RNA sequence: GGGAACGACUCGAGUAGAGUCGAAAAAUAUAUGUGCCUUGCUAUGAACGCGUUCAUUUUUAAGUGACCGGACCCUAAAAUAUUCAGGUAGCAUGACGGAAGCUAUGAAUUAAUCCUGGUGGAGGGGAAUUUGCUUGGUUUUCGAACCAAGCAAAUUAAAAGAAACAACAACAACAAC
Reactivity to 2A3 in 0.01 (KOAc 150mM, MgCl2 10mM, bicine 150mM(pH8.5), 24C), signal-to-noise 3, nucleotides 027 to 126: a000u140a000u080a020u100g060u070g120c000c000u020u090g010c030u050a050u110g160a040a010c070g030c040g080u070u030c050a060u020u030u050u160u130a240a060g060u030g060a040c010c030g000g060a070c010c000c000u080a090a110a050a050u160a100u110u110c000a040g100g000u050a020g090c050a000u120g030a070c080g040g040a110a040g010c030u040a010u170g010a050a000u120u040a110a080u020c020c000u050g030g060u080g010g040a030g000g020g000g010
Reactivity to DMS in 0.01 (KOAc 150mM, MgCl2 10mM, bicine 150mM(pH8.5), 24C), signal-to-noise 3, nucleotides 027 to 126: a090u030a070u030a080u020g010u020g020c050c030u000u000g010c040u000a080u010g000a050a080c130g000c080g020u010u010c060a040u010u000u020u060u080a020a100g000u030g000a070c040c040g000g000a110c040c000c010u000a040a060a090a140u050a030u010u000c060a070g030g010u010a070g020c030a080u010g000a090c050g000g040a100a120g000c020u000a050u010g000a070a040u020u020a060a140u030c030c050u010g000g000u000g000g010a090g010g000g010g000